Notes
Chemical mapping of a 207-nucleotide RNA with 2A3 and DMS. DMS adducts were read by reverse transcription with MarathonRT.

[RMDB]
RNA sequence: GGGAACGACUCGAGUAGAGUCGAAAAGUAUUUAGCUUGAGAUAGCUAAAUCACCUCGCUAUGAUUAGGGUGAGACCUAGGAACCGUAGGGGUAUUCUCAAAGGAAGCUUUUGCAGUGACGCCCAUGAAAACGCGGAGACGUUCGCGUCUCCGCGAAGUUGUAUGAAAACUUCGGUUUUCAUACAACAAAAGAAACAACAACAACAAC
Reactivity to 2A3 in 0.01 (KOAc 150mM, MgCl2 10mM, bicine 150mM(pH8.5), 24C), signal-to-noise 2, nucleotides 027 to 156: g050u050a010u010u000u000a000g000c010u010u010g040a040g010a100u070a040g000c010u020a000a000a000u000c010a010c000c000u030c010g000c030u120a060u180g040a140u090u070a030g040g030g020u090g100a100g040a030c000c000u010a050g060g030a050a050c030c020g050u050a040g000g000g000g010u020a080u060u020c050u010c000a030a020a000g070g010a050a020g020c040u030u060u100u080g070c100a010g020u020g030a050c090g000c000c020c010a030u100g090a030a090a010a010c010g010c010g020g010a000g010a000c010g030u060u080c190g000c000g080u000c000u000c010c010g000c000g000a000a000
Reactivity to DMS in 0.01 (KOAc 150mM, MgCl2 10mM, bicine 150mM(pH8.5), 24C), signal-to-noise 1, nucleotides 027 to 156: g020u000a000u030u000u000a020g000c020u000u000g000a300g000a220u000a060g020c000u000a010a030a020u020c000a080c020c000u000c000g000c070u000a060u000g000a240u000u010a090g030g000g000u010g010a180g000a220c040c020u000a100g030g020a150a060c060c080g020u020a040g040g000g010g030u000a050u000u010c000u000c030a060a180a130g010g000a090a160g020c020u010u010u010u010g020c050a060g050u000g040a160c070g000c000c020c000a150u000g000a090a040a080a070c020g100c030g030g000a010g010a030c040g010u010u010c300g020c070g000u000c030u000c020c000g040c040g000a010a020

Record summary:
Source: RMDB library M2RFPK, as collected in RNAgym.